[RMDB]
RNA sequence: GGGAACGACUCGAGUAGAGUCGAAAAGACAUCGCGAAUGCAACGAAACGUCGAUUGGAAAAGAGCGGUUGGCUCUACAAAGCCAAGUCGAUUGUGAUUGCCGGCGGAGGAAGCCAACUGCCCGGUGAUGUAUGUUAGCUUUCGAGCUAACAUACAUAAAAGAAACAACAACAACAAC
Reactivity to DMS in 0.01 (KOAc 150mM, MgCl2 10mM, bicine 150mM(pH8.5), 24C), signal-to-noise 7, nucleotides 027 to 126: g010a120c050a060u000c010g010c020g010a100a120u010g010c110a070a070c100g010a060a070a100c110g010u000c010g000a090u000u020g010g000a090a080a100a120g010a030g020c000g010g010u000u000g010g000c000u000c030u000a080c050a020a270a250g020c000c000a050a050g010u000c010g000a130u010u020g020u010g010a050u000u000g020c180c120g020g000c000g010g010a300g010g000a160a070g010c000c020a020a020c000u000g000c010c010c000g000g010u000g010
Reactivity to 2A3 in 0.01 (KOAc 150mM, MgCl2 10mM, bicine 150mM(pH8.5), 24C), signal-to-noise 5, nucleotides 027 to 126: g040a020c000a030u020c030g010c030g080a170a070u190g060c080a100a070c050g080a140a050a020c060g090u100c010g050a100u060u140g090g020a050a090a060a060g040a020g010c000g000g040u030u020g020g000c010u000c000u050a130c030a010a050a000g000c000c000a010a010g030u020c010g080a160u070u300g110u160g080a040u010u090g110c150c070g010g000c000g010g000a020g030g000a030a020g010c000c000a000a010c010u000g000c000c000c000g040g040u150g040